Source information: Chemical mapping of a 177-nucleotide RNA with 2A3 and DMS. In probing experiments dimethyl sulfate is read out at A N1 and C N3, which are open when not base-paired. For 2A3 the reverse transcriptase was SuperScript II with manganese.

RNA sequence: GGGAACGACUCGAGUAGAGUCGAAAAAUGAAUUGAUUCGUCAAUUCAUGACCGCAAGCGACCCGAAAGGCAUUUUAUGCGUACGCUGGCGAAAGCCUAAAAAUCAUCGUGUCUUCGGACACGAUAAGGAAUUCGUAGAAUUCGUUCUACGAAUUCCAAAAGAAACAACAACAACAAC
Reactivity to 2A3 in 0.01 (KOAc 150mM, MgCl2 10mM, bicine 150mM(pH8.5), 24C), signal-to-noise 6, nucleotides 027 to 126: a000u010g000a000a000u010u000g010a010u050u070c170g060u010c080a000a000u000u000c000a010u010g050a040c020c020g000c050a050a020g030c010g060a070c050c050c060g110a130a050a020g140g000c020a030u070u120u090u230a070u130g020c000g020u040a060c040g000c040u020g020g010c020g020a100a030a010g050c010c010u100a120a110a020a010a030u160c060a010u010c010g000u000g000u000c000u020u060c210g030g000a000c000a000c010g010a000u020a010a040
Reactivity to DMS in 0.01 (KOAc 150mM, MgCl2 10mM, bicine 150mM(pH8.5), 24C), signal-to-noise 6, nucleotides 027 to 126: a000u000g000a010a000u000u000g010a030u000u010c180g010u000c000a000a010u000u000c000a010u010g000a160c120c010g010c060a060a060g010c020g010a110c070c080c060g000a050a100a090g000g000c070a070u010u010u010u010a040u010g010c060g000u010a070c070g020c050u000g000g020c020g000a090a070a110g000c040c030u000a000a040a070a070a100u000c120a030u000c000g010u000g010u000c010u010u010c210g020g010a000c000a010c000g010a000u000a030a070

It was measured as part of the RMDB library M2PK50.